[RMDB]
RNA sequence: GGGAACGACUCGAGUAGAGUCGAAAACAUGGUGGCAAGUACGUCGCGAUAUUGCCCCACCUGCAAUAGAAGCGUAGACAUCAACUGUAGCGAGAGCUACUCAACUUAUGGACCUUAGAGCAAGCGAAGACGACCGGUCCUGUCGGAAUUCGCUAGAGAUAUCAUAGUGGUUCGCCACUAUGAUAUCAAAAGAAACAACAACAACAAC
Reactivity to DMS in 0.01 (KOAc 150mM, MgCl2 10mM, bicine 150mM(pH8.5), 24C), signal-to-noise 4, nucleotides 027 to 156: c090a110u000g000g010u020g130g070c020a090a060g030u000a070c070g050u000c030g020c050g020a220u000a090u000u010g000c020c070c000c090a070c050c030u000g000c060a030a090u000a080g000a120a120g010c050g000u010a100g020a100c060a150u010c080a050a070c040u000g020u000a030g010c000g020a230g000a300g030c000u000a010c000u010c090a040a100c070u000u000a050u010g020g010a020c030c020u010u010a100g010a160g010c070a100a090g020c040g010a090a040g000a180c030g010a060c020c050g020g000u010c020c030u010g010u000c010g010g000a060a210u000u000c050g010c050u000a060g010a300
Reactivity to 2A3 in 0.01 (KOAc 150mM, MgCl2 10mM, bicine 150mM(pH8.5), 24C), signal-to-noise 7, nucleotides 027 to 156: c060a070u100g000g010u060g040g020c040a060a040g060u070a060c060g040u030c040g060c030g070a050u030a050u090u060g010c010c010c000c020a040c010c010u050g020c030a030a030u040a100g070a120a020g040c020g030u040a040g040a080c020a050u100c040a050a100c070u070g000u010a000g000c010g020a040g000a010g060c000u010a010c000u020c040a060a140c020u100u110a050u150g040g010a040c010c020u050u080a070g010a010g090c050a100a010g000c020g020a010a000g030a040c020g000a000c000c040g060g040u040c000c010u010g010u000c000g010g020a120a090u020u000c010g000c010u020a030g010a000

Chemical mapping of a 207-nucleotide RNA with DMS and 2A3. DMS adducts were read by reverse transcription with MarathonRT. For 2A3 the reverse transcriptase was SuperScript II with manganese. Reactivities are given for positions 27 through 156. It was measured as part of the RMDB library OK3TST. For DMS, 7,483 sequencing reads were counted.